[RMDB]
RNA sequence: GGGAACGACUCGAGUAGAGUCGAAAAGCCACAUAUCCCGUGACAUUGCGAAAGCAAGGCUGGCGAUAGGUAGUCCUGGGCGGCGACAGCCUUGGACUGCGGCGUAAAGGUGUACCUGGGGCCGUUAUAACGCGGUAACAGUUCGCUGUUACCGCAACAUCUCAGCUAAGUUCGCUUAGCUGAGAUGAAAAGAAACAACAACAACAAC
Reactivity to DMS in 0.01 (KOAc 150mM, MgCl2 10mM, bicine 150mM(pH8.5), 24C), signal-to-noise 2, nucleotides 027 to 156: g030c020c020a050c020a140u000a060u000c010c020c000g000u000g000a110c040a140u000u000g010c000g000a150a170a240g000c020a010a060g010g060c030u020g010g000c050g020a130u000a050g030g010u000a050g000u000c010c000u010g020g020g010c000g000g020c070g010a100c110a190g020c000c010u000u000g000g000a020c000u000g020c030g000g020c040g000u000a060a090a050g020g020u000g020u000a070c040c030u000g000g030g040g000c000c010g000u000u000a120u010a120a180c120g010c000g000g010u000a010a030c010a050g000u000u010c230g040c020u020g000u000u000a000c000c000g060c000a010a060
Reactivity to 2A3 in 0.01 (KOAc 150mM, MgCl2 10mM, bicine 150mM(pH8.5), 24C), signal-to-noise 1, nucleotides 027 to 156: g040c010c010a070c020a060u140a040u040c000c030c000g070u040g030a080c150a260u020u070g030c020g030a090a040a010g020c000a020a000g020g010c060u030g000g000c050g020a050u050a020g100g100u030a000g010u020c000c000u030g010g000g020c020g000g070c090g060a060c060a040g010c000c000u000u020g020g000a000c010u000g000c000g000g000c010g040u070a060a070a020g040g000u100g030u160a130c010c030u020g000g010g050g010c010c000g020u030u040a140u030a180a040c110g000c000g000g010u000a000a000c010a010g020u070u120c130g020c100u000g000u000u000a000c000c000g000c000a000a000

Chemical mapping of a 207-nucleotide RNA with DMS and 2A3.
The RNA was probed in 150 mM KOAc, 10 mM MgCl2 and 150 mM bicine (pH 8.5) at 24 C.
For DMS, 4,527 sequencing reads were counted.
As a SHAPE reagent, 2A3 marks flexible, mostly unpaired nucleotides at the ribose 2'-OH.
2A3 adducts were read by reverse transcription with SuperScript II with manganese.